[RMDB]
RNA sequence: GGGAACGACUCGAGUAGAGUCGAAAACACCUCUCCCUGCCCGGGUGCUCGAGCUGCCGUUGCAAAGCCAACUUUGGAAAAAGUUUUUUGGGGGAGACUUGGGCCUUGAGGUGCCCAGCUCCGCGCUGAAUUAUACUUCCUUCGGGAAGUAUAAUUCAAAAGAAACAACAACAACAAC
Reactivity to DMS in 0.01 (KOAc 150mM, MgCl2 10mM, bicine 150mM(pH8.5), 24C), signal-to-noise 1, nucleotides 027 to 126: c100a140c050c010u010c030u000c010c000c010u000g040c040c030c060g010g010g050u000g030c010u000c050g010a080g020c030u010g000c020c020g020u000u030g000c060a060a090a160g010c080c070a000a070c010u000u010u000g010g010a080a080a030a060a060g010u000u010u010u000u010u000g020g020g010g020g010a020g000a050c030u020u000g020g010g000c010c050u020u010g000a120g020g020u010g010c000c000c010a020g000c010u000c010c000g000c060g010c210u000